[RMDB]
RNA sequence: GGGAACGACUCGAGUAGAGUCGAAAAAGUGACCAUGGCUAGGUGGUACGAUCCUCCAUGGCUAGGGAUCGGAUCCGCGUCUGCGUACCGCUAGUCUAUGCGCUCAUGAGGUACGCUAGUGAUCUCGUAGAUCGUGCGUAUUCGUACGCACGAUCUAAAAAGAAACAACAACAACAAC
Reactivity to DMS in 0.01 (KOAc 150mM, MgCl2 10mM, bicine 150mM(pH8.5), 24C), signal-to-noise 3, nucleotides 027 to 126: a140g010u010g020a110c030c010a000u000g000g010c080u000a030g010g040u000g020g000u010a060c100g020a060u000c010c000u000c090c050a080u010g020g000c060u000a090g010g010g010a060u010c070g010g010a210u010c050c050g020c100g010u010c070u020g020c010g000u000a010c010c010g000c020u000a030g010u030c000u020a050u000g000c170g000c050u000c150a070u000g010a060g000g010u000a010c010g000c060u000a030g020u010g000a010u000c030u000c070g010
Reactivity to 2A3 in 0.01 (KOAc 150mM, MgCl2 10mM, bicine 150mM(pH8.5), 24C), signal-to-noise 2, nucleotides 027 to 126: a000g030u050g050a080c040c000a020u030g030g000c070u060a030g070g120u040g040g040u110a040c070g050a050u000c010c020u020c040c030a130u130g060g050c010u030a080g030g000g010a030u050c000g000g040a070u070c060c000g030c020g050u060c080u130g000c000g000u010a010c000c000g000c070u040a020g000u040c050u090a130u140g090c120g000c050u010c010a110u120g010a040g020g030u020a030c000g020c040u040a040g060u040g110a040u020c050u010c080g050
Conditions: 150 mM KOAc, 10 mM MgCl2 and 150 mM bicine (pH 8.5), 24 C. This 177-nucleotide RNA was probed chemically with DMS and 2A3. As a SHAPE reagent, 2A3 marks flexible, mostly unpaired nucleotides at the ribose 2'-OH. High DMS reactivity at an A or C suggests that its Watson-Crick edge is free.